[RMDB]
RNA sequence: GGGAACGACUCGAGUAGAGUCGAAAACUCAGAGAGAUAAGGUAAUGACACAGAGGUUGUACUCACUUUGACGAUGAUUAACCAUCAUUGAGGAGAACCAAAGUAACUUUUGGGUGUUAGGUACAAGUAGGCAACUGCGAUUCGUCGCAGUUGCCUAAAAAGAAACAACAACAACAAC
Reactivity to DMS in 0.01 (KOAc 150mM, MgCl2 10mM, bicine 150mM(pH8.5), 24C), signal-to-noise 1, nucleotides 027 to 126: c050u000c000a090g040a070g020a040g000a090u020a090a030g010g000u030a030a060u030g050a110c020a040c030a080g020a210g000g010u000u010g000u000a080c000u020c000a050c090u010u000u000g000a180c240g000a010u000g010a090u000u000a030a260c220c150a130u000c020a010u070u000g020a300g060g000a100g020a000a190c030c020a050a080a100g000u000a090a130c250u000u020u000u000g000g010g020u000g000u000u000a000g000g000u000a020c020a030a070g020